Background
This 177-nucleotide RNA was probed chemically with 2A3 and DMS.

[RMDB]
RNA sequence: GGGAACGACUCGAGUAGAGUCGAAAACAAACCUGGUAAAGGCGGGAACUUAGUACAAAAUACCAAGAUUUGAGGGUUUUAUUAUUGCUGCAAAACUAGAUUGAUAGCGGCCGCACCUGUCACGCUGCGAUAUUCGGUGAUUCGUCACCGAAUAUCGAAAAGAAACAACAACAACAAC
Reactivity to 2A3 in 0.01 (KOAc 150mM, MgCl2 10mM, bicine 150mM(pH8.5), 24C), signal-to-noise 2, nucleotides 027 to 126: c020a010a090a010c010c000u050g030g050u190a110a060a040g050g010c050g020g000g010a080a020c020u010u080a080g040u140a070c050a090a260a010a070u070a100c020c060a100a110g050a260u060u120u180g120a150g010g080g010u000u110u050u010a080u100u030a040u020u130g000c030u050g010c040a030a050a060a050c070u080a070g040a290u050u140g060a040u020a040g020c000g000g000c040c010g020c010a020c030c000u030g020u100c020a010c060g000c000u120g070
Reactivity to DMS in 0.01 (KOAc 150mM, MgCl2 10mM, bicine 150mM(pH8.5), 24C), signal-to-noise 2, nucleotides 027 to 126: c060a080a130a070c020c020u000g010g000u010a030a080a080g000g000c030g030g000g000a120a090c060u000u010a010g000u000a030c100a110a070a100a270u000a030c010c020a070a060g000a140u000u000u020g020a190g000g020g010u000u000u020u000a060u010u010a100u000u000g020c020u000g020c030a020a060a090a090c020u020a040g000a130u000u000g020a040u000a150g020c060g000g020c010c080g010c050a070c040c020u010g000u000c010a070c080g020c090u000g030

The 2A3 profile rests on 867 reads. The RNA was probed in 150 mM KOAc, 10 mM MgCl2 and 150 mM bicine (pH 8.5) at 24 C. 2A3 adducts were read by reverse transcription with SuperScript II with manganese. Reactivities are given for positions 27 through 126. It was measured as part of the RMDB library OK2TST. The DMS profile rests on 1,123 reads.